Structure probing data (2A3) for a 177-nucleotide construct.

[RMDB]
RNA sequence: GGGAACGACUCGAGUAGAGUCGAAAAAGACUUUUUGCCUUCUAAAUUAUUGAAGAGGAGAUCUUAUAAGAUUUUGAUGAAUUAUUUAGAUCCGUCACUAGGUGGUGCAUGUGGGACAUCCUUAGCCGGUCACACUGGUCUUCGGACCAGUGUGACCAAAAGAAACAACAACAACAAC
Reactivity to 2A3 in 0.01 (KOAc 150mM, MgCl2 10mM, bicine 150mM(pH8.5), 24C), signal-to-noise 1, nucleotides 027 to 126: a020g000a040c090u000u000u000u140u110g300c210c000u000u000c020u020a000a270a000u300u300a020u150u040g150a020a040g000a210g210g000a000g000a000u050c000u100u100a020u020a150a300g000a230u010u000u000u230g130a150u300g210a040a050u020u020a020u030u120u000a000g000a000u050c000c080g130u130c100a000c080u080a040g000g000u060g000g000u000g040c000a060u200g090u150g210g000g000a000c000a190u000c000c000u040u020a060g000c060c000

Overview
The reactions ran in a buffer of 150 mM KOAc, 10 mM MgCl2 and 150 mM bicine (pH 8.5), at 24 C. Reactivities are given for positions 27 through 126.